[RMDB]
RNA sequence: GGGAACGACUCGAGUAGAGUCGAAAAUUGCGUUCGCGCAAACUCACACCUUUGUGUAUCCUGAUGACCUGUUGGAGGAGCGCAGAUACCCAUUGGGUGUAGCUCCGCGAAACAACAGCAAGGGAUACACUCUGGUUCGUAUGUCAUUCGUGACAAACUUAUACGGUCAUUUCGAUGACCGUAUAAGAAAAGAAACAACAACAACAAC
Reactivity to DMS in 0.01 (KOAc 150mM, MgCl2 10mM, bicine 150mM(pH8.5), 24C), signal-to-noise 4, nucleotides 027 to 156: u000u000g000c010g000u010u010c150g010c050g010c020a060a070a110c050u000c070a120c050a060c010c020u000u010u000g030u000g020u000a020u000c010c000u010g010a130u000g020a100c300c000u000g020u010u000g010g010a120g030g030a120g010c010g000c110a100g010a120u000a050c010c010c000a300u000u000g020g010g050u010g010u000a300g010c010u000c040c000g000c050g020a150a100a160c020a020a050c010a040g010c020a100a120g000g000g030a020u000a000c000a010c000u010c030u000g010g000u000u000c070g040u010a080u000g020u000c030a130u000u000c180g020u000g000a070c030a070a080a240
Reactivity to 2A3 in 0.01 (KOAc 150mM, MgCl2 10mM, bicine 150mM(pH8.5), 24C), signal-to-noise 9, nucleotides 027 to 156: u050u010g000c010g010u020u070c270g000c010g000c090a040a060a140c060u090c030a070c000a000c020c000u010u010u010g010u000g000u000a000u020c000c000u100g080a260u100g040a160c010c010u000g010u000u010g040g100a150g010g000a010g000c020g000c070a040g100a200u150a050c000c000c070a200u220u300g020g000g000u030g010u030a050g000c000u000c010c000g020c020g120a110a090a020c000a000a000c000a010g020c030a080a160g000g000g000a000u000a000c000a000c000u000c000u000g020g000u060u070c090g070u110a140u160g020u010c010a040u070u110c220g130u080g030a000c000a020a050a010